[RMDB]
RNA sequence: GGGAACGACUCGAGUAGAGUCGAAAAGAUAUGGAAUCCAACAUACUCAUGCUAGAUACACAUCGGAAACGAUGUGAAUAUCUUGGACCAUGUGGAUUCCUAAGUCAAACACUGUCUUCGGACAGUGCUCCCGAAUCAAGUUCGCUUGAUUCGGGAGAAAAGAAACAACAACAACAAC
Reactivity to 2A3 in 0.01 (KOAc 150mM, MgCl2 10mM, bicine 150mM(pH8.5), 24C), signal-to-noise 3, nucleotides 027 to 126: g000a000u050a010u120g010g000a000a000u000c010c030a080a150c030a180u180a140c070u120c240a110u300g100c080u220a030g000a010u000a000c000a000c000a000u010c030g030g000a020a030a030c000g020a000u030g000u020g010a020a010u040a000u000c010u060u220g190g060a070c060c040a040u060g000u040g010g000a010u010u000c000c000u010a070a020g020u000c060a130a110a050c020a010c000u000g000u010c010u070u060c210g170g000a000c010a010g010u020g030
Reactivity to DMS in 0.01 (KOAc 150mM, MgCl2 10mM, bicine 150mM(pH8.5), 24C), signal-to-noise 3, nucleotides 027 to 126: g000a060u010a240u020g000g000a010a000u000c010c000a050a130c070a040u000a140c240u030c110a090u000g020c070u020a020g010a000u000a050c010a030c010a010u000c010g020g010a070a090a210c000g000a010u000g010u000g000a100a100u000a000u000c000u020u000g010g000a100c300c070a040u000g050u000g020g000a030u000u000c000c000u010a010a150g020u000c030a140a090a290c020a000c000u000g000u010c000u000u000c300g000g000a010c000a010g020u030g000

Chemical mapping of a 177-nucleotide RNA with 2A3 and DMS. Reactivities are given for positions 27 through 126. Source: RMDB library TTRDES, as collected in RNAgym. The RNA was probed in 150 mM KOAc, 10 mM MgCl2 and 150 mM bicine (pH 8.5) at 24 C.